An RNA of 177 nucleotides, treated with DMS and 2A3 and read out base by base.
2A3 adducts were read by reverse transcription with SuperScript II with manganese.
RNA sequence: GGGAACGACUCGAGUAGAGUCGAAAACAUGAGCGAUCGAUCCAUGUCAUGUGCUAGGUCACUCUGUGUAUACUAGGUGGUACGUACCUCGCUGCUGAUCCAUGUCGCACUAGCAUGCUGCGUCGUAAGGUUUCGUUACCUUCGGGUAACGAAACCUAAAAGAAACAACAACAACAAC
Reactivity to DMS in 0.01 (KOAc 150mM, MgCl2 10mM, bicine 150mM(pH8.5), 24C), signal-to-noise 2, nucleotides 027 to 126: c080a040u000g000a030g010c050g010a030u010c060g000a110u020c190c000a010u000g030u020c170a120u010g020u000g000c040u000a130g000g000u000c030a030c020u000c010u020g020u010g000u000a070u000a080c110u000a130g030g020u000g020g000u000a060c110g020u000a040c070c020u000c090g040c030u010g000c090u000g000a070u020c020c060a130u010g040u010c150g010c050a100c140u000a100g000c060a020u010g010c080u010g020c080g000u000c060g030u000a100
Reactivity to 2A3 in 0.01 (KOAc 150mM, MgCl2 10mM, bicine 150mM(pH8.5), 24C), signal-to-noise 1, nucleotides 027 to 126: c010a040u170g020a020g030c010g050a010u050c050g060a020u000c040c020a020u070g050u050c080a070u160g010u000g130c020u070a100g030g010u020c010a020c010u130c060u050g100u000g080u050a110u000a150c050u090a040g210g000u060g100g030u050a060c040g030u030a030c010c010u020c020g020c110u030g000c030u020g020a070u040c020c020a050u100g030u070c030g010c060a010c060u040a020g040c000a060u080g020c020u050g000c000g050u020c010g050u020a080